[RMDB]
RNA sequence: GGGAACGACUCGAGUAGAGUCGAAAAGGAUGGGAAGAGUAUAUCCUAUGGGAAUCCCCGUCCUCCCGUCACGUCCAGCCCCUCCCCGUGUCUAGUGAAGGGGGACUCCGGAACUCCUUGCAUGUUAACAUCCUCAGCUUCGGCUGAGGAAAAAGAAACAACAACAACAAC
Reactivity to DMS in 0.01 (KOAc 150mM, MgCl2 10mM, bicine 150mM(pH8.5), 24C), signal-to-noise 4, nucleotides 027 to 129: g000g000a050u000g010g080g010a100a050g020a160g000u050a080u010a090u010c050c040u030a090u050g080g060g000a060a170u030c050c010c000c000g000u010c000c040u000c020c000c030g000u040c090a140c220g000u020c040c060a100g020c130c010c050c010u020c010c000c000c000g020u040g030u000c080u000a010g010u040g020a090a020g010g010g010g000g050a110c030u060c060c070g000g030a040a060c080u020c030c050u030u050g000c090a160u050g030u030u050a090a140c070a080
Reactivity to 2A3 in 0.01 (KOAc 150mM, MgCl2 10mM, bicine 150mM(pH8.5), 24C), signal-to-noise 2, nucleotides 027 to 129: g000g000a000u000g000g000g060a120a180g020a090g070u110a080u040a050u110c000c010u070a140u260g090g010g020a000a110u050c000c000c000c000g010u000c000c010u030c040c010c000g030u040c010a040c080g000u000c000c000a000g020c010c000c010c000u000c000c000c000c000g020u020g030u030c040u040a050g040u020g000a040a040g000g000g000g030g000a020c000u000c000c000g050g020a020a000c000u000c020c000u030u030g050c020a070u100g000u050u000a030a020c000a020